[RMDB]
RNA sequence: GGGAACGACUCGAGUAGAGUCGAAAAGAGCGGUUCGUCGGAUGAUCGAUAAAGGAAAGCUGCCUGUAAUUGAUAUGACCGAUCCACAAUCAGCUUCAGGUCGUGCAGGUGAAUAUUGGGUAUACCUUCCGGCAUGGAAUAACGGACUAAAACUGGCAUUGUCACACUGUUUCGACAGUGUGACAAUAAAAGAAACAACAACAACAAC
Reactivity to 2A3 in 0.01 (KOAc 150mM, MgCl2 10mM, bicine 150mM(pH8.5), 24C), signal-to-noise 1, nucleotides 027 to 156: g080a000g000c000g040g020u080u000c020g020u000c000g080g030a080u030g020a040u150c040g000a050u190a060a080a070g020g000a130a160a010g040c020u020g030c050c000u020g080u050a150a110u040u130g000a070u080a050u220g050a000c060c040g000a020u080c020c020a090c060a020a150u100c060a020g010c000u000u020c020a040g000g000u000c000g020u120g020c000a000g030g000u050g020a120a000u140a050u090u080g000g020g000u080a050u050a150c000c000u000u130c000c000g030g010c020a040u050g050g060a020a010u070a120a030c020g020g120a010c050u170a050a020a090a050c030u030g010g190c000